The record gives the reactivity of an RNA of 177 nucleotides to 2A3 and DMS.
2A3 adducts were read by reverse transcription with SuperScript II with manganese.
Source: RMDB library M2PK50, as collected in RNAgym.
Conditions: 150 mM KOAc, 10 mM MgCl2 and 150 mM bicine (pH 8.5), 24 C.
DMS adducts were read by reverse transcription with MarathonRT.
DMS (dimethyl sulfate) methylates the pairing face of unpaired adenines and cytosines.
[RMDB]
RNA sequence: GGGAACGACUCGAGUAGAGUCGAAAACUAUUGUGGUUCGCCACAAUAGGCAGGGCUGUUUUUCUCGCUGACUAUCAGCCCCAAACAAAAAAGUCAGCAUAAUUGUACUGCGCUUCGGCGCAGUAAAGGUGAUUUUGUUAUUCGUAACAAAAUCACCAAAAGAAACAACAACAACAAC
Reactivity to 2A3 in 0.01 (KOAc 150mM, MgCl2 10mM, bicine 150mM(pH8.5), 24C), signal-to-noise 2, nucleotides 027 to 126: c000u000a000u010u020g010u010g030g040u050u040c190g080c050c000a000c000a000a000u000a000g000g030c090a040g000g000g000c000u020g000u030u000u000u040u000c110u070c130g030c030u000g000a000c010u010a030u050c000a000g000c010c000c000c060a030a040a010c000a000a010a020a000a000a000g000u000c010a000g000c010a010u060a010a020u060u110g060u040a010c010u000g020c030g000c000u030u050c210g130g000c000g020c000a000g000u000a000a000a000
Reactivity to DMS in 0.01 (KOAc 150mM, MgCl2 10mM, bicine 150mM(pH8.5), 24C), signal-to-noise 2, nucleotides 027 to 126: c010u010a020u000u000g010u000g000g010u000u030c210g040c000c000a000c000a000a000u000a000g010g000c220a110g010g000g050c000u010g000u000u000u000u000u000c050u000c220g010c000u000g010a010c010u000a010u010c000a000g020c020c000c000c150a010a010a190c060a000a000a000a010a300a000g020u000c000a000g020c020a060u030a080a060u020u000g000u000a010c000u000g000c000g010c000u000u020c210g020g040c000g040c000a010g000u000a000a030a050